[RMDB]
RNA sequence: GGGAACGACUCGAGUAGAGUCGAAAAUGUUUCCCAGCCAGGGAUUGUCUUCCUCUAGUUUCUUGAUCUUCUUCUUGGCCUUCCGGAGAUCCUUCUCGAGAUCAUCCACUAACUUUCUUGCAUUGACCCACAAGAGGGUUCGCCCUCUUGAAAAGAAACAACAACAACAAC
Reactivity to DMS in 0.01 (KOAc 150mM, MgCl2 10mM, bicine 150mM(pH8.5), 24C), signal-to-noise 9, nucleotides 027 to 129: u050g010u020u000u010c000c010c000a140g020c080c080a050g000g040g030a060u000u050g010u030c030u000u000c030c000u050c080u030a110g010u020u030u000c020u030u010g040a110u030c000u000u030c040u010u000c060u010u030g000g000c100c050u020u020c030c070g000g000a100g010a080u040c060c030u020u010c030u010c040g020a080g020a050u010c060a110u020c030c040a100c080u030a080a080c080u010u000u010c030u010u000g020c060a060u050u030g020a120c000c030c020a190
Reactivity to 2A3 in 0.01 (KOAc 150mM, MgCl2 10mM, bicine 150mM(pH8.5), 24C), signal-to-noise 9, nucleotides 027 to 129: u110g020u010u050u010c000c000c000a000g060c040c040a020g030g010g030a060u070u110g060u040c030u090u030c020c020u030c030u030a060g050u020u080u020c000u020u070g070a100u030c010u070u000c000u060u000c010u040u070g040g010c000c000u040u030c030c020g010g000a020g010a040u050c010c000u050u050c050u030c040g080a100g020a140u030c010a060u010c010c010a050c050u060a110a060c010u050u090u080c000u020u040g020c020a100u010u100g060a090c000c000c010a030

The data come from the RNA Mapping Database (RMDB), library 15KLIB. An RNA of 170 nucleotides, treated with DMS and 2A3 and read out base by base. For DMS the reverse transcriptase was MarathonRT. Conditions: 150 mM KOAc, 10 mM MgCl2 and 150 mM bicine (pH 8.5), 24 C. For DMS, 107,816 sequencing reads were counted. Values cover nucleotides 27 to 129.